[RMDB]
RNA sequence: GGGAACGACUCGAGUAGAGUCGAAAACUACAGCACUCUGGCUUUAGAUGAACGCUGAGCUCUCCACAGUAUGCUGUGUGCUUGAACCACAGUCAAAAGGAAAGUGUUCAGGCCUGUGAGCAAAAGGCUGAUUUAAAAGCUUCGGCUUUUAAAUCAGAAAAGAAACAACAACAACAAC
Reactivity to 2A3 in 0.01 (KOAc 150mM, MgCl2 10mM, bicine 150mM(pH8.5), 24C), signal-to-noise 2, nucleotides 027 to 126: c010u060a020c010a030g000c010a000c030u050c050u100g050g020c050u260u190u210a150g050a200u110g030a160a030c030g000c040u050g040a050g110c050u030c020u000c040c010a070c000a070g100u110a080u180g050c000u040g010u020g000u060g070c040u020u070g050a060a060c030c020a030c030a060g080u180c040a090a000a010a110g110g010a110a100a030g040u030g040u100u010c010a000g020g090c000c040u100g050u050g020a030g050c050a020a070a070a000g110g030
Reactivity to DMS in 0.01 (KOAc 150mM, MgCl2 10mM, bicine 150mM(pH8.5), 24C), signal-to-noise 2, nucleotides 027 to 126: c050u010a090c190a100g000c030a050c020u000c040u000g050g020c040u000u000u020a100g010a100u000g020a070a060c100g000c070u010g010a130g020c070u000c060u010c040c000a100c110a090g010u000a050u000g030c020u000g010u000g020u020g010c050u000u000g000a100a110c080c010a020c040a050g010u010c120a030a090a110a160g010g000a040a110a040g000u000g020u000u000c010a050g000g000c000c050u030g030u000g010a070g020c090a020a020a060a110g010g000